[RMDB]
RNA sequence: GGGAACGACUCGAGUAGAGUCGAAAAUCCGACGAGCUGAACGCUUUCGAAGGAAAGCUUGACCAGCUAAUCUUCUGCAACGCCAUUACGAGGACUGCCCUUAGAGGCUCAUGGCGAUUGGUCACCCAAAACUAUUUGAGGUUCGCCUCAAAUAGAAUCCUCUAUGUUGGUUCGCCAACAUAGAGGAAAAAGAAACAACAACAACAAC
Reactivity to 2A3 in 0.01 (KOAc 150mM, MgCl2 10mM, bicine 150mM(pH8.5), 24C), signal-to-noise 3, nucleotides 027 to 156: u030c010c010g020a040c050g020a030g010c030u010g040a090a040c060g000c010u050u060u060c060g080a120a070g150g020a030a020a000g010c000u070u100g040a050c080c000a000g000c010u020a030a110u090c090u220u060c060u110g070c010a070a050c010g030c000c020a030u080u090a050c100g060a060g120g050a080c090u090g010c000c000c000u040u050a130g060a090g090g010c020u010c030a000u030g020g000c000g110a130u030u050g020g010u040c010a050c010c030c010a040a090a030a080c010u000a020u000u000u000g000a000g000g040u040u060c140g060c050c000u020c000a000a000a000u000a000g000a000a070
Reactivity to DMS in 0.01 (KOAc 150mM, MgCl2 10mM, bicine 150mM(pH8.5), 24C), signal-to-noise 2, nucleotides 027 to 156: u000c000c050g010a160c110g000a020g000c010u000g010a110a070c260g030c010u000u000u000c020g000a300a230g000g010a040a010a020g010c030u000u000g050a210c080c000a070g000c010u000a030a090u000c030u000u000c050u000g000c040a110a100c030g040c020c010a080u010u030a220c030g010a170g010g000a090c060u010g020c010c010c000u010u000a120g030a190g000g000c010u000c060a060u000g000g010c020g020a150u000u000g010g010u010c020a110c010c020c000a050a060a070a240c000u000a010u000u010u000g010a000g000g030u010u000c300g040c030c000u000c000a000a000a010u020a000g000a050a160
Source: RMDB library M2RFPK, as collected in RNAgym. An RNA of 207 nucleotides, treated with 2A3 and DMS and read out base by base. For DMS, 2,566 sequencing reads were counted. 2A3 adducts were read by reverse transcription with SuperScript II with manganese. The reactions ran in a buffer of 150 mM KOAc, 10 mM MgCl2 and 150 mM bicine (pH 8.5), at 24 C. For 2A3, 1,542 sequencing reads were counted.